[RMDB]
RNA sequence: GGGAACGACUCGAGUAGAGUCGAAAAGAGGCGGGAAAGUUAAUCAAAAGUGCAACAAAACUUUCCCAAAAUCAAAUCUAAAUCGUUUUGUUGCACUUUUUUCUUCGAUUUAGAUUUGUAAAACCAACAAUUUAGCUCAAUUCGUUGAGCUAAAUUGAAAAGAAACAACAACAACAAC
Reactivity to 2A3 in 0.01 (KOAc 150mM, MgCl2 10mM, bicine 150mM(pH8.5), 24C), signal-to-noise 1, nucleotides 027 to 126: g030a000g040g040c170g030g000g000a020a010a010g020u070u130a100a040u140c100a010a080a250a070g000u000g000c000a010a010c000a000a200a010a020c010u000u010u000c020c010c000a000a000a000a000u050c000a000a000a000u000c000u000a010a010a000u010c010g030u020u030u070u210g010u000u000g010c000a020c000u150u050u020u010u040u020c070u050u020c000g000a000u000u010u000a000g000a000u000u000u030g000u020a010a040a050a070c030c020a000a060
Reactivity to DMS in 0.01 (KOAc 150mM, MgCl2 10mM, bicine 150mM(pH8.5), 24C), signal-to-noise 3, nucleotides 027 to 126: g010a130g010g010c300g010g000g000a020a020a040g010u010u000a110a100u020c200a100a080a070a050g000u000g000c010a010a000c010a070a060a060a050c020u000u000u010c010c000c020a030a030a050a100u010c000a010a010a000u000c000u000a000a010a010u000c000g010u000u000u000u000g000u000u000g000c020a010c010u000u000u000u000u010u000c100u010u000c020g010a010u010u000u000a010g010a010u000u000u000g010u000a080a040a100a110c110c060a080a170